RNA sequence: GGGAACGACUCGAGUAGAGUCGAAAAGAUAUGGACAAGCCUGAAUCGUGUAGUGCGACGAAGUCGGAAACGACAGAGCAUCACACGUGAGCUUGUCCUAAGUCAAACCAGUGGUUCGCCACUGGAAGUAGUGAGAGCUCUUCGGAGCUCUCACUACAAAAGAAACAACAACAACAAC
Reactivity to DMS in 0.01 (KOAc 150mM, MgCl2 10mM, bicine 150mM(pH8.5), 24C), signal-to-noise 1, nucleotides 027 to 126: g000a000u000a300u000g020g000a040c000a040a000g000c000c060u030g000a090a110u000c000g020u000g000u000a020g020u000g000c010g010a190c180g000a160a030g000u000c000g000g010a090a070a250c000g000a000c030a010g000a220g000c000a060u000c010a070c000a000c000g000u000g010a240g000c000u000u000g000u030c000c000u000a010a060g010u040c020a060a120a170c040c000a060g020u000g000g010u020u030c300g010c010c000a020c000u000g000g000a000a060
Reactivity to 2A3 in 0.01 (KOAc 150mM, MgCl2 10mM, bicine 150mM(pH8.5), 24C), signal-to-noise 1, nucleotides 027 to 126: g020a000u020a030u100g000g000a010c020a020a000g060c030c110u240g110a050a130u230c010g000u000g030u040a110g020u000g070c090g130a200c070g070a300a030g010u010c020g000g070a020a110a040c000g020a010c000a000g040a000g000c000a000u060c000a010c000a000c000g010u060g010a020g020c000u000u000g020u000c000c000u010a000a000g020u010c020a010a040a070c000c000a000g010u000g040g050u060u070c300g080c080c010a000c000u000g000g000a000a050
Overview:
Structure probing data (DMS and 2A3) for a 177-nucleotide construct. Reactivities are given for positions 27 through 126. Source: RMDB library TTRDEL, as collected in RNAgym. The reactions ran in a buffer of 150 mM KOAc, 10 mM MgCl2 and 150 mM bicine (pH 8.5), at 24 C. For DMS, 690 sequencing reads were counted.